The record gives the reactivity of an RNA of 207 nucleotides to 2A3 and DMS. The data come from the RNA Mapping Database (RMDB), library PDB130. For 2A3 the reverse transcriptase was SuperScript II with manganese.
RNA sequence: GGGAACGACUCGAGUAGAGUCGAAAAGGAGCUGGCAUCAAGCACACACCCUGUAGCUCACGACGCCUUGCUUAACCACACCCCACGGGAAACAGCAGUGACAAAAAUUAAGCCAUAAACGAAAGUUUGACUAAGUUAUAUUAAUUAGGGUUGGUAACCAGUAUAUAGUGUUCGCACUAUAUACUGGAAAAGAAACAACAACAACAAC
Reactivity to 2A3 in 0.01 (KOAc 150mM, MgCl2 10mM, bicine 150mM(pH8.5), 24C), signal-to-noise 2, nucleotides 027 to 156: g060g000a040g020c030u040g030g000c000a040u030c030a070a010g010c020a010c000a000c000a030c070c060c000u040g040u070a080g010c020u050c010a080c080g030a010c020g020c010c000u050u220g020c000u050u090a070a030c020c000a030c010a020c030c000c010c010a030c050g030g010g010a120a070a020c040a020g010c010a020g010u020g140a060c060a020a100a020a010a010u100u140a090a010g010c030c020a030u080a100a070a010c030g030a140a050a050g020u040u070u110g020a030c030u040a060a000g030u080u070a130u040a050u180u200a140a110u060u080a050g000g040g000u020u020g020g000u040a040a080
Reactivity to DMS in 0.01 (KOAc 150mM, MgCl2 10mM, bicine 150mM(pH8.5), 24C), signal-to-noise 2, nucleotides 027 to 156: g030g000a090g020c050u020g000g030c030a130u010c060a090a100g000c040a090c050a110c060a120c110c030c000u000g020u000a100g000c040u000c020a100c060g000a080c020g010c020c040u000u000g010c010u000u010a060a140c030c000a080c040a080c060c000c010c020a090c090g030g000g030a140a040a100c130a090g030c040a110g030u000g000a100c040a020a080a060a050a160u000u000a100a050g010c020c000a070u010a030a020a090c040g000a090a070a200g010u000u000u000g000a070c020u000a040a100g040u000u000a060u010a120u000u000a040a130u020u000a050g000g010g010u010u020g030g010u000a120a210